[RMDB]
RNA sequence: GGGAACGACUCGAGUAGAGUCGAAAACAACGGCAACUAAGCAUGCUUCAAGAAUUAGCUUUUUUCUGUUCAGAUCUCGAAAACAUUCAGCGGCUCAGUGAUUGUCGAACAAUAGAUGAAGCGCAAAUGCGAAUAGAUGGUUCGCCAUCUAUUCGCAAAAAGAAACAACAACAACAAC
Reactivity to 2A3 in 0.01 (KOAc 150mM, MgCl2 10mM, bicine 150mM(pH8.5), 24C), signal-to-noise 4, nucleotides 027 to 126: c060a070a010c000g010g000c000a020a010c060u120a050a060g050c010a020u130g010c010u040u060c020a070a070g030a130a130u120u100a110g020c020u110u000u000u000u010u050c050u020g020u020u040c010a030g020a120u050c020u010c040g050a060a100a040a030c060a060u200u150c040a020g020c000g100g000c010u000c060a040g030u040g040a080u010u040g020u020c020g000a010a030c020a030a010u070a090g090a030u080g010a120a030g020c030g010c070a010a040a020
Reactivity to DMS in 0.01 (KOAc 150mM, MgCl2 10mM, bicine 150mM(pH8.5), 24C), signal-to-noise 2, nucleotides 027 to 126: c130a070a170c040g040g010c030a070a050c060u020a040a130g000c010a130u000g010c020u000u010c120a060a080g030a120a040u020u000a130g050c080u000u000u000u020u070u000c010u000g000u010u000c100a020g000a110u010c060u000c080g010a120a030a040a030c050a120u030u000c040a070g000c030g000g010c030u000c030a030g000u000g020a020u010u000g020u010c130g030a040a190c070a060a000u030a040g000a020u000g000a070a030g000c070g030c260a040a070a130
Annotation: Chemical mapping of a 177-nucleotide RNA with 2A3 and DMS. For DMS the reverse transcriptase was MarathonRT.